[RMDB]
RNA sequence: GGGAACGACUCGAGUAGAGUCGAAAAGAGGACGGACUACUGGCUGUAUCCGGAGUAGGACGUCCGAAGCAGAGGCUGCAACCGGUCUGCAAACACGACAGGGCUGUUAUGUCACCUGGAGUGGAGAGGGUUCCAUCUGCUUCGGCAGGUGGAACCCAAAAGAAACAACAACAACAAC
Reactivity to 2A3 in 0.01 (KOAc 150mM, MgCl2 10mM, bicine 150mM(pH8.5), 24C), signal-to-noise 1, nucleotides 027 to 126: g140a010g000g000a000c040g000g010a000c000u000a010c000u030g280g110c100u180g070u190a130u050c150c030g000g000a000g000u000a000g000g000a000c010g000u000c000c020g020a060a000g000c020a000g030a050g150g000c020u050g020c120a030a010c050c000g040g070u040c010u000g000c000a020a020a020c020a010c010g000a000c000a000g000g010g000c070u100g060u230u170a050u080g020u130c000a060c100c010u000g000g010a000g010u000g000g030a140g040a010